[RMDB]
RNA sequence: GGGAACGACUCGAGUAGAGUCGAAAAGCUAGUCGGAGACGACUAGCAACGAUCAGUUCGCUGAUCGGAACGUGCAUGCAAAUACGCUAGAAGCAAGAAUAGGCGACGGAUAGCGUAAAACUGAGAAAGCAGAUAACAAAAAUAAAAAGGCGUCGCGCGACUCAUUAGUCUUCGGACUAAUGAGUCGAAAAGAAACAACAACAACAAC
Reactivity to DMS in 0.01 (KOAc 150mM, MgCl2 10mM, bicine 150mM(pH8.5), 24C), signal-to-noise 1, nucleotides 027 to 156: g000c010u000a010g060u010c000g010g000a300g000a300c000g040a030c010u000a040g030c000a000a030c020g020a000u010c000a010g060u000u000c300g070c000u000g000a030u000c000g000g000a070a090c070g040u000g040c130a070u000g030c030a080a180a150u000a000c000g000c030u010a020g040a170a250g030c090a090a130g030a100a180u000a140g030g000c000g010a000c000g000g000a130u000a040g000c000g000u000a000a060a050a050c070u000g030a160g000a140a130a220g040c090a070g000a160u000a100a170c040a010a090a010a020a170u030a060a070a180a080a150g040g030c030g030u000c000g000c000g010
Reactivity to 2A3 in 0.01 (KOAc 150mM, MgCl2 10mM, bicine 150mM(pH8.5), 24C), signal-to-noise 2, nucleotides 027 to 156: g010c000u000a000g000u000c010g000g020a060g040a110c010g000a000c000u000a000g000c000a010a010c000g000a000u000c000a000g040u030u070c120g020c140u000g010a000u000c000g010g050a060a050c010g060u080g000c020a060u110g040c010a050a050a040u050a020c000g000c000u000a020g030a110a020g080c100a080a080g040a140a100u090a140g050g030c010g000a000c000g000g000a010u000a040g020c000g000u020a020a070a040a010c040u040g020a020g080a170a020a010g020c040a020g040a100u160a090a040c080a040a090a020a050a040u250a050a100a020a010a000g020g020c010g010u000c000g000c000g010
Notes:
An RNA of 207 nucleotides, treated with DMS and 2A3 and read out base by base. Reactivities are rounded to 0.1 and cut off at 0 and 3. The reactions ran in a buffer of 150 mM KOAc, 10 mM MgCl2 and 150 mM bicine (pH 8.5), at 24 C. 2A3 adducts were read by reverse transcription with SuperScript II with manganese. The 2A3 profile rests on 1,084 reads. For DMS the reverse transcriptase was MarathonRT.